The record gives the reactivity of an RNA of 177 nucleotides to 2A3 and DMS. It was measured as part of the RMDB library OK1LIB.
RNA sequence: GGGAACGACUCGAGUAGAGUCGAAAACCAAGAGGACAACUAUUUACUGACCGACUUCAGUUCAGCUCUUGGCGUAGUCGACGAAGUCGAACACAUGCAGGAACUGCAUGUGUAAUAGUUGGCUACAGAUAGUAUUGUCAUUCGUGACGGUACUAUCAAAAGAAACAACAACAACAAC
Reactivity to 2A3 in 0.01 (KOAc 150mM, MgCl2 10mM, bicine 150mM(pH8.5), 24C), signal-to-noise 9, nucleotides 027 to 126: c000c000a010a010g040a020g060g060a050c040a100a040c130u150a120u210u280u200a090c040u060g030a030c020c020g010a000c000u020u010c020a030g040u110u170c050a060g030c020u010c010u050u080g030g000c050g020u030a010g010u020c010g000a000c010g020a010a000g000u010c000g000a010a000c000a000c000a000u000g000c000a000g140g200a210a130c090u000g000c000a000u000g000u000g000u000a000a000u030a000g000u000u000g000g000c000u020a010c010a010
Reactivity to DMS in 0.01 (KOAc 150mM, MgCl2 10mM, bicine 150mM(pH8.5), 24C), signal-to-noise 9, nucleotides 027 to 126: c000c000a040a020g000a060g000g020a110c180a100a150c170u030a080u030u020u030a050c030u010g000a100c190c000g000a020c010u000u000c000a020g000u010u020c140a100g000c010u000c020u010u000g010g010c270g010u010a000g010u000c020g010a010c010g000a040a020g000u000c010g010a220a040c010a000c000a000u000g000c000a010g000g030a140a300c050u000g000c000a000u000g010u000g010u000a020a040u020a130g000u000u000g000g000c000u000a020c050a090
Conditions: 150 mM KOAc, 10 mM MgCl2 and 150 mM bicine (pH 8.5), 24 C. 2A3 is a SHAPE reagent: it acylates the 2'-hydroxyl of flexible nucleotides of all four kinds. 2A3 adducts were read by reverse transcription with SuperScript II with manganese. For DMS, 67,855 sequencing reads were counted. DMS adducts were read by reverse transcription with MarathonRT.